An RNA of 177 nucleotides, treated with DMS and 2A3 and read out base by base. Reactivities are rounded to 0.1 and cut off at 0 and 3. The DMS profile rests on 2,634 reads. DMS adducts were read by reverse transcription with MarathonRT. For 2A3, 847 sequencing reads were counted.

RNA sequence: GGGAACGACUCGAGUAGAGUCGAAAAAGAACUCACCUAUUUGUUGAGCCCACUGGUGAAUAAGGAUAAAGACAGGUUAUAUCUGGGAGAAGGAGCAGGAGCUAUGUUAUCAUGCUAUGAUGCAACAUCCACUACUAGCAUUCGUGCUAGUAGUGGAAAAAGAAACAACAACAACAAC
Reactivity to DMS in 0.01 (KOAc 150mM, MgCl2 10mM, bicine 150mM(pH8.5), 24C), signal-to-noise 3, nucleotides 027 to 126: a080g000a100a180c060u010c020a060c040c030u000a100u020u010u000g020u000u000g010a120g010c040c010c040a140c130u010g010g010u000g000a090a040u010a070a120g000g010a070u010a080a070a070g010a070c090a050g010g000u000u000a050u010a060u010c040u000g000g000g020a110g010a060a070g010g010a060g020c060a060g000g020a060g020c060u000a050u000g020u000u000a070u000c030a000u000g020c100u010a060u000g000a050u000g020c090a060a040c160a110
Reactivity to 2A3 in 0.01 (KOAc 150mM, MgCl2 10mM, bicine 150mM(pH8.5), 24C), signal-to-noise 1, nucleotides 027 to 126: a010g030a060a040c010u000c040a060c030c050u080a190u130u120u170g180u010u070g120a000g000c040c000c010a020c040u050g040g030u040g040a050a040u140a060a020g100g010a000u110a060a050a000g050a060c030a020g030g000u130u010a160u040a050u210c090u030g050g000g000a090g030a080a030g030g010a000g050c000a030g040g000a010g010c000u070a050u120g060u040u050a090u070c060a020u040g040c000u080a090u220g080a040u100g010c010a030a020c010a060